An RNA of 177 nucleotides, treated with 2A3 and DMS and read out base by base.
DMS (dimethyl sulfate) methylates the pairing face of unpaired adenines and cytosines.
The 2A3 profile rests on 2,207 reads.
The RNA was probed in 150 mM KOAc, 10 mM MgCl2 and 150 mM bicine (pH 8.5) at 24 C.
RNA sequence: GGGAACGACUCGAGUAGAGUCGAAAAACUGAAAGACAAGUGCUUUCUUGGAUGAGUAAGAGGAGGACUGAGGUAAUAACUAAAGAACAGCAUCAACUGUUUCUAAGUCUUCUCCCACAGUCUCAUGCGAGGCUAAAAAUUUCGAUUUUUAGCCUCGAAAAGAAACAACAACAACAAC
Reactivity to 2A3 in 0.01 (KOAc 150mM, MgCl2 10mM, bicine 150mM(pH8.5), 24C), signal-to-noise 2, nucleotides 027 to 126: a000c040u020g000a040a040a020g020a020c080a130a050g040u100g260c040u050u050u110c010u000u110g150g040a120u020g010a010g020u040a100a020g050a080g070g020a020g000g020a010c010u030g040a030g040g050u060a090a120u120a200a070c060u090a150a000a050g000a000a000c000a000g020c040a200u070c040a110a130c020u020g020u020u090u020c030u020a030a000g000u000c000u110u000c000u020c010c000c010a050c020a010g060u000c000u000c020a020u060g010
Reactivity to DMS in 0.01 (KOAc 150mM, MgCl2 10mM, bicine 150mM(pH8.5), 24C), signal-to-noise 3, nucleotides 027 to 126: a110c070u010g010a070a070a060g000a030c020a090a070g020u010g030c100u000u010u010c000u000u010g000g010a100u000g000a050g000u000a080a060g010a120g000g010a030g000g000a040c030u000g010a060g010g000u000a120a050u010a100a110c070u000a070a070a130g000a020a010c030a010g000c080a090u020c300a110a100c010u000g010u000u020u000c020u000a120a040g000u000c030u000u000c020u010c020c020c040a090c170a150g000u010c040u000c040a080u010g020